[RMDB]
RNA sequence: GGGAACGACUCGAGUAGAGUCGAAAAACUAUGAUGGAUCUUGUAUAUGCCCUGAGGCACUUUGAUCAAAAUAGCGAAGUGCUUAAGGCUAUCUUAGUGAAGUAUGGUUGCUGUGAUGUUACCUACUAUACCAAGAACUUCGGUUCUUGGAAAAGAAACAACAACAACAAC
Reactivity to 2A3 in 0.01 (KOAc 150mM, MgCl2 10mM, bicine 150mM(pH8.5), 24C), signal-to-noise 4, nucleotides 027 to 129: a000c130u190a120u170g130a040u020g000g030a040u000c010u060u060g080u120a020u000a030u170g050c070c010c000u040g050a080g010g050c000a020c000u000u050u030g040a110u230c160a090a130a140a180u140a050g060c020g000a000a000g000u000g010c000u030u010a010a000g030g000c020u010a000u000c020u070u080a060g030u000g090a040a010g030u010a040u170g030g010u080u020g000c070u050g070u040g170a080u090g000u050u040a010c000c030u000a040c030u110a080u120a090
Reactivity to DMS in 0.01 (KOAc 150mM, MgCl2 10mM, bicine 150mM(pH8.5), 24C), signal-to-noise 4, nucleotides 027 to 129: a060c080u080a050u030g010a060u030g030g000a050u020c060u010u060g030u050a000u030a060u060g010c110c030c060u050g040a120g050g000c020a050c020u060u020u000g030a070u010c230a050a050a150a090u030a140g050c020g020a000a000g070u010g050c010u000u080a030a030g000g020c000u060a010u000c000u000u040a050g030u030g030a270a080g020u010a040u030g040g010u010u060g040c060u070g030u080g020a090u030g020u080u000a110c120c070u040a080c110u000a080u050a190
An RNA of 170 nucleotides, treated with 2A3 and DMS and read out base by base. The DMS profile rests on 11,177 reads. The RNA was probed in 150 mM KOAc, 10 mM MgCl2 and 150 mM bicine (pH 8.5) at 24 C. For DMS the reverse transcriptase was MarathonRT. 2A3 adducts were read by reverse transcription with SuperScript II with manganese.